Source information:
Conditions: 150 mM KOAc, 10 mM MgCl2 and 150 mM bicine (pH 8.5), 24 C. This 177-nucleotide RNA was probed chemically with 2A3. Reactivities are rounded to 0.1 and cut off at 0 and 3.
[RMDB]
RNA sequence: GGGAACGACUCGAGUAGAGUCGAAAACCUCGGUCCGCAAGGGAAUCUGUUAACGGAUCGAGGAAAGGACGAGUGCUUAACAGAUUCCCUUGGCACUUGUCCAGUGGAGAUGCGAAAGCAUUUCCACGCUCGUAGAACGCUUCGGCGUUCUACGAGCAAAAGAAACAACAACAACAAC
Reactivity to 2A3 in 0.01 (KOAc 150mM, MgCl2 10mM, bicine 150mM(pH8.5), 24C), signal-to-noise 3, nucleotides 027 to 126: c000c000u000c000g010g010u000c010c000g070c080a030a020g000g010g000a020a100u050c010u010g060u050u050a060a050c010g010g010a030u010c000g000a000g010g020a080a050a010g010g010a000c010g010a000g020u040g010c040u090u110a040a000c000a020g000a270u040u000c000c010c000u000u010g010g000c000a000c000u030u010g020u010c000c030a010g010u000g000g000a000g000a000u000g000c000g080a090a010a000g000c000a000u000u000u000c000c000a000c030